[RMDB]
RNA sequence: GGGAACGACUCGAGUAGAGUCGAAAACGAUUUCACGAGGAUUACAUUUAGUCAAUUUAACGGUACUGAUAGAAGACUUGAAUUACAAUUACGUGAUGCAGUUGGAAUUCAAAGAAGAACUUUGCGACGUAAUUAAUGGUUUCGACCAUUAAUUACGAAAAGAAACAACAACAACAAC
Reactivity to DMS in 0.01 (KOAc 150mM, MgCl2 10mM, bicine 150mM(pH8.5), 24C), signal-to-noise 9, nucleotides 027 to 126: c070g010a150u010u010u000c030a060c070g010a090g000g010a100u010u000a090c100a080u010u000u010a070g010u000c060a070a070u010u000u010a070a110c120g010g000u000a060c080u010g010a080u000a080g010a110a120g000a130c060u000u000g000a010a010u000u010a040c040a010a010u000u000a040c040g010u010g020a100u010g020c040a030g010u000u000g000g000a030a030u000u000c010a010a030a080g010a140a090g000a070a080c050u000u000u000g010c100g010a150
Reactivity to 2A3 in 0.01 (KOAc 150mM, MgCl2 10mM, bicine 150mM(pH8.5), 24C), signal-to-noise 8, nucleotides 027 to 126: c010g040a060u020u070u060c060a030c030g040a050g130g040a030u030u110a050c020a040u070u140u130a040g010u030c020a050a110u030u130u170a150a030c050g040g030u080a080c050u060g060a080u050a140g130a090a010g010a020c020u040u040g020a020a020u030u030a030c020a000a020u040u010a020c050g040u080g080a080u140g020c020a020g010u030u020g020g040a030a040u050u040c010a040a030a050g080a090a010g050a100a060c020u030u050u080g030c090g050a060

Chemical mapping of a 177-nucleotide RNA with DMS and 2A3. For 2A3, 11,031 sequencing reads were counted. The RNA was probed in 150 mM KOAc, 10 mM MgCl2 and 150 mM bicine (pH 8.5) at 24 C. DMS (dimethyl sulfate) methylates the pairing face of unpaired adenines and cytosines. For DMS, 15,248 sequencing reads were counted.